[RMDB]
RNA sequence: GGGAACGACUCGAGUAGAGUCGAAAAGAUCGGCGCGGCGCAUAUCGGAGCCGUGGAUCAGCUCGCGUGGUGCGGUGAACAGCGCAUCGACGAAACCGUCCGCGAUUCCGGCCCGCUCACCUUGCGAAUCGCAGGAGAGGUUCGCCUCUCCUGCGAUAAAAGAAACAACAACAACAAC
Reactivity to DMS in 0.01 (KOAc 150mM, MgCl2 10mM, bicine 150mM(pH8.5), 24C), signal-to-noise 1, nucleotides 027 to 126: g000a100u020c140g000g000c160g020c070g000g000c120g050c070a120u010a140u020c070g000g000a060g010c030c000g000u020g000g000a000u000c090a200g110c300u020c090g130c000g010u020g000g000u000g000c000g000g000u170g000a060a030c170a220g000c000g000c000a000u000c000g070a020c010g000a030a040a220c240c300g000u000c010c060g000c000g080a020u000u000c000c000g000g000c000c000c060g000c000u050c000a020c040c000u150u030g000c040g000a100
Reactivity to 2A3 in 0.01 (KOAc 150mM, MgCl2 10mM, bicine 150mM(pH8.5), 24C), signal-to-noise 2, nucleotides 027 to 126: g070a080u050c050g010g030c050g020c000g020g020c070g000c110a060u200a070u290c060g020g010a010g000c000c000g000u010g010g010a040u130c010a000g020c030u040c030g050c040g010u110g010g000u030g010c020g020g030u160g080a150a080c050a120g110c030g000c010a050u010c010g140a050c010g010a100a030a040c000c000g010u050c010c010g000c000g000a010u020u020c010c000g000g000c060c000c000g000c010u040c010a070c010c000u020u160g060c070g050a090
Source: RMDB library OK1LIB, as collected in RNAgym. An RNA of 177 nucleotides, treated with DMS and 2A3 and read out base by base. DMS adducts were read by reverse transcription with MarathonRT. Reactivities are given for positions 27 through 126.